Chemical mapping of a 177-nucleotide RNA with 2A3 and DMS. For DMS the reverse transcriptase was MarathonRT. The data come from the RNA Mapping Database (RMDB), library M2PK90. Conditions: 150 mM KOAc, 10 mM MgCl2 and 150 mM bicine (pH 8.5), 24 C. For 2A3, 4,739 sequencing reads were counted. Values cover nucleotides 27 to 126. For 2A3 the reverse transcriptase was SuperScript II with manganese.
RNA sequence: GGGAACGACUCGAGUAGAGUCGAAAAAUAAAGAGCGUACAUCUCUCUCAGACUGUACGACAGUCUGACACUCUCGUACAAUCGCUCAACGAGAGAGAGAGAGCGUUCAAAGAAGCGAGAAAAAAAAGAACAUGUUUUGAUUCGUCAAAACAUGUUCAAAAGAAACAACAACAACAAC
Reactivity to 2A3 in 0.01 (KOAc 150mM, MgCl2 10mM, bicine 150mM(pH8.5), 24C), signal-to-noise 3, nucleotides 027 to 126: a000u200a020a100a030g010a010g020c020g000u040a050c070a230u000c000u000c000u000c000u000c010a010g000a010c010u010g000u100a080c060g050a030c080a000g000u010c060u050g030a020c010a030c070u000c000u010c000g010u040a040c080a060a190u080c090g050c100u070c100a030a030c040g030a020g000a010g000a010g000a000g000a010g000a000g000c000g000u010u010c030a090a060a010g080a050a010g050c110g010a020g120a170a070a020a010a000a000a000a020
Reactivity to DMS in 0.01 (KOAc 150mM, MgCl2 10mM, bicine 150mM(pH8.5), 24C), signal-to-noise 3, nucleotides 027 to 126: a090u000a080a140a130g000a000g000c020g040u000a120c150a280u000c000u000c000u000c020u000c000a190g000a010c030u010g000u000a040c190g010a090c030a010g000u020c060u000g010a060c300a070c040u000c070u010c000g010u000a050c120a070a030u000c040g020c180u000c130a170a020c100g010a010g010a010g010a110g000a010g010a050g010a120g020c040g000u000u000c060a060a090a100g000a090a030g030c080g020a060g010a040a000a000a040a080a070a090a090